Description: The record gives the reactivity of an RNA of 307 nucleotides to DMS. Reactivities are given for positions 27 through 266. DMS adducts were read by reverse transcription with MarathonRT. It was measured as part of the RMDB library POS240. The reactions ran in a buffer of 150 mM KOAc, 10 mM MgCl2 and 150 mM bicine (pH 8.5), at 24 C.
RNA sequence: GGGAACGACUCGAGUAGAGUCGAAAACAGAGCCCACAGGCUAUAAUUGGAGCACGACCAUGGGUCCCCUGCCACCCUUUGCUGUGGCCCAGGGCGCCCAGCUCCUGAUCCGUCCUGUGGACAAACCAAUCAACACAACUUUAAUCUGCAACGUCACCAAUGCCCUAGGAGCUCGCCAGGCAGAACUGACCGUCCAGGUCAAAGAGGGACCUCCCAGUGAGCACUCAGGCAUGUCCCGUAACGCCAUCAUCUUCCUGGUUCUGGGAACCGUUCCGUUCGCGGAACGGAAAAGAAACAACAACAACAAC
Reactivity to DMS in 0.01 (KOAc 150mM, MgCl2 10mM, bicine 150mM(pH8.5), 24C), signal-to-noise 1, nucleotides 027 to 266: c080a100g000a220g040c070c020c000a030c030a000g000g030c040u000a090u000a210a140u000u000g000g000a080g060c020a060c240g000a090c140c160a300u000g030g020g000u020c300c000c000c020u000g000c010c010a000c000c050c120u000u000u010g030c200u000g000u000g000g010c160c230c250a010g000g050g000c300g000c030c000c000a010g000c000u000c000c000u000g030a030u000c280c050g030u000c040c020u000g000u000g020g010a050c030a120a060a240c020c000a190a060u020c110a150a040c080a160c110a130a110c120u000u000u000a020a150u010c100u000g020c110a010a030c090g010u050c020a070c030c000a060a040u030g020c060c010c050u010a070g000g020a190g000c090u000c090g000c010c040a070g000g000c160a010g000a080a190c140u000g010a010c030c000g000u000c300c130a080g010g010u000c010a000a100a130g000a070g000g000g000a080c180c090u000c050c050c030a090g000u000g000a050g010c090a050c050u000c130a060g020g030c000a090u020g000u010c000c050c000g000u000a050a090c120g010c020c000a100u000c030a070u000c060u000u000c010c000u000g000g020u000u020c010u000g020g000g000a060a200